Background:
An RNA of 177 nucleotides, treated with DMS and 2A3 and read out base by base. The 2A3 profile rests on 7,475 reads. It was measured as part of the RMDB library TTRDES. The reactions ran in a buffer of 150 mM KOAc, 10 mM MgCl2 and 150 mM bicine (pH 8.5), at 24 C. For 2A3 the reverse transcriptase was SuperScript II with manganese.
[RMDB]
RNA sequence: GGGAACGACUCGAGUAGAGUCGAAAAGAUAUGGACCGUAACACGCAACAGCUGGGUAUCGGAAACGAUACACCAGACAUGCGUGCUACGGUCCUAAGUCAAAGCACAGACCUUCGGGUCUGUGCAACUUAACACAUGCGUUCGCGCAUGUGUUAAGAAAAGAAACAACAACAACAAC
Reactivity to DMS in 0.01 (KOAc 150mM, MgCl2 10mM, bicine 150mM(pH8.5), 24C), signal-to-noise 3, nucleotides 027 to 126: g000a020u000a210u010g000g000a010c010c010g000u000a000a020c000a010c000g040c000a110a110c270a200g000c000u000g010g000g020u000a000u000c010g030g000a060a040a120c010g010a010u000a010c000a130c000c010a000g020a030c060a300u010g030c000g010u000g000c020u000a000c000g020g000u000c000c000u000a010a050g010u010c020a150a140a130g010c010a010c000a010g000a010c000c010u010u020c250g020g020g000u000c010u000g010u000g000c000a010a010
Reactivity to 2A3 in 0.01 (KOAc 150mM, MgCl2 10mM, bicine 150mM(pH8.5), 24C), signal-to-noise 3, nucleotides 027 to 126: g040a010u030a040u080g000g000a000c010c000g000u010a000a020c000a010c010g020c040a300a300c060a300g040c000u020g000g000g040u000a000u020c000g010g010a030a030a010c020g000a000u000a010c110a300c030c000a010g030a000c020a090u300g010c000g000u000g000c010u010a000c010g000g000u020c000c000u000a010a000g010u020c020a020a120a000g000c010a010c000a010g000a000c020c000u100u190c300g120g000g000u010c000u010g010u000g000c000a000a000